[RMDB]
RNA sequence: GGGAACGACUCGAGUAGAGUCGAAAAGGUAGCAGAGAAGAGACUAGCCUUCAGACUAGAUAGUAUCACACUACGGGUACAUAGUAGAGACAUACAUAGAUGCGUAUGACACAUCAGAGCUGCCAUGAUGAGUAUAUCCAUUCGUGGAUAUACUCAUAAAAGAAACAACAACAACAAC
Reactivity to 2A3 in 0.01 (KOAc 150mM, MgCl2 10mM, bicine 150mM(pH8.5), 24C), signal-to-noise 9, nucleotides 027 to 126: g020g000u030a010g000c040a010g060a010g020a270a010g060a010g030a070c020u030a020g060c010c000u080u120c070a080g030a140c020u020a010g030a090u080a080g050u030a020u070c030a030c010a020c230u200a030c100g030g000g030u040a040c030a060u070a030g050u040a020g030a010g020a080c010a020u050a020c010a020u120a070g130a090u130g050c030g020u040a020u080g040a030c010a000c000a100u060c020a000g030a010g100c020u010g010c010c000a030u110g060
Reactivity to DMS in 0.01 (KOAc 150mM, MgCl2 10mM, bicine 150mM(pH8.5), 24C), signal-to-noise 9, nucleotides 027 to 126: g020g030u000a030g030c030a090g010a140g010a120a110g010a150g010a140c040u000a040g010c020c020u000u000c200a150g010a080c030u000a050g010a130u000a070g020u000a110u010c060a110c150a100c090u010a050c100g000g000g010u000a050c120a070u000a050g010u000a050g000a100g010a090c100a040u000a040c040a100u010a090g000a060u010g010c070g020u000a060u010g010a120c080a040c050a040u010c030a070g000a150g010c030u000g000c020c030a100u010g000

Description
An RNA of 177 nucleotides, treated with 2A3 and DMS and read out base by base. The data come from the RNA Mapping Database (RMDB), library OK2TRN. The reactions ran in a buffer of 150 mM KOAc, 10 mM MgCl2 and 150 mM bicine (pH 8.5), at 24 C.